[RMDB]
RNA sequence: GGGAACGACUCGAGUAGAGUCGAAAAUCACAUCUAUAGGUGUAACGUCAGCAUCGACAACCUGAUUCUGGACGAACGUUCGAGCGUGAAGCUAUCAUGUCGCACGCUCGCAGAUGCAGGUACCGAACGCGUGCCGCGAAACCGCGCUCGUGUUAUAAACAUUCCUACUGUUCGCAGUAGGAAUGUUAAAAGAAACAACAACAACAAC
Reactivity to DMS in 0.01 (KOAc 150mM, MgCl2 10mM, bicine 150mM(pH8.5), 24C), signal-to-noise 3, nucleotides 027 to 156: u010c060a080c030a080u000c060u010a130u000a110g020g070u000g010u000a050a070c060g020u000c020a140g030c050a100u000c040g010a100c040a080a100c020c020u000g040a170u000u000c050u000g020g020a190c060g020a060a080c080g020u020u010c000g000a050g020c010g050u000g000a020a090g020c060u000a150u010c170a090u010g030u000c050g020c040a020c000g000c000u000c000g020c060a040g000a060u010g010c010a080g000g000u000a050c030c030g000a030a020c040g020c000g050u000g020c010c050g000c120g000a070a100a050c040c010g030c020g030c020u000c020g010u010g030u010u000a070u000a100
Reactivity to 2A3 in 0.01 (KOAc 150mM, MgCl2 10mM, bicine 150mM(pH8.5), 24C), signal-to-noise 7, nucleotides 027 to 156: u100c010a020c020a090u060c070u140a160u110a160g000g020u030g020u030a070a020c020g020u010c030a060g070c040a130u040c080g050a050c060a070a030c020c010u020g010a050u050u040c010u020g050g070a060c030g020a160a030c050g080u100u090c010g000a040g030c000g000u000g050a120a000g060c040u100a160u300c080a110u200g070u080c040g000c030a000c000g000c000u000c000g000c020a010g010a010u090g090c010a000g000g010u010a020c040c060g050a040a000c010g020c010g000u040g120c220c020g010c030g080a190a110a060c150c020g010c000g000c000u000c000g010u020g040u050u030a080u150a040